Annotation: Chemical mapping of a 177-nucleotide RNA with DMS. For DMS, 658 sequencing reads were counted. For DMS the reverse transcriptase was MarathonRT.
RNA sequence: GGGAACGACUCGAGUAGAGUCGAAAAGCAAAAGAUUAUCCAGGUGUAGCGGUGAAAUUCGUAGAGAUCUGGUGGAUAAUGAACCGGUGGCGAAGGCGAAAGAUAACCGCUGAAAAGAAGAAUUGAAUCCAAUUAUGUGCUUCGGCACAUAAUUGGAAAAAGAAACAACAACAACAAC
Reactivity to DMS in 0.01 (KOAc 150mM, MgCl2 10mM, bicine 150mM(pH8.5), 24C), signal-to-noise 1, nucleotides 027 to 126: g000c150a050a070a060a090g020a070u020u000a070u000c000c010a080g010g020u000g000u000a100g030c050g010g010u000g010a030a100a090u000u000c030g050u010a140g010a130g000a090u000c000u010g040g000u000g000g010a080u000a050a070u020g030a160a080c030c020g050g010u000g000g000c300g010a080a170g000g010c000g000a010a000a030g000a050u000a100a030c020c000g010c040u010g010a020a040a040a100g000a060a050g000a040a080u010u000g000a060a180